[RMDB]
RNA sequence: GGGAACGACUCGAGUAGAGUCGAAAAGCAACGCCGCGCAACUCGCAGAAGCCAGAGCUAAACGUGCUGAGGAGCCAGAGCGCUAUUCGCGCCUUGGCGUUCCUGACGGCUGGACGCGAGAGCAAGCUCCAUGCAAUCUGUUCGCAGAUUGCAUGGAAAAAGAAACAACAACAACAAC
Reactivity to DMS in 0.01 (KOAc 150mM, MgCl2 10mM, bicine 150mM(pH8.5), 24C), signal-to-noise 5, nucleotides 027 to 126: g030c110a090a110c110g020c030c020g010c120g000c060a110a140c010u000c000g000c020a070g030a210a040g040c020c010a060g010a060g010c060u040a100a190a110c150g010u030g010c060u020g000a040g010g010a110g010c000c000a000g000a100g010c010g010c010u000a120u070u050c150g010c030g000c000c010u000u000g010g000c000g030u030u020c000c020u010g010a110c060g010g020c010u000g000g020a230c080g000c000g000a030g000a290g000c100a120a090g000c090
Reactivity to 2A3 in 0.01 (KOAc 150mM, MgCl2 10mM, bicine 150mM(pH8.5), 24C), signal-to-noise 8, nucleotides 027 to 126: g070c040a060a060c060g040c050c020g050c000g000c050a090a150c030u010c000g000c010a020g030a080a010g020c000c000a020g030a010g070c090u250a190a140a020c050g040u110g060c090u090g080a060g020g010a000g010c000c000a000g020a030g020c020g000c020u140a220u200u300c150g000c000g000c000c000u030u050g000g010c000g040u060u030c000c000u020g020a020c030g040g050c000u000g050g050a010c020g010c000g010a010g010a000g030c010a030a030g010c010
Source: RMDB library OK1LIB, as collected in RNAgym. Chemical mapping of a 177-nucleotide RNA with DMS and 2A3. The 2A3 profile rests on 8,733 reads. For DMS the reverse transcriptase was MarathonRT. High 2A3 reactivity points to a flexible backbone, as in loops and unpaired stretches. For 2A3 the reverse transcriptase was SuperScript II with manganese.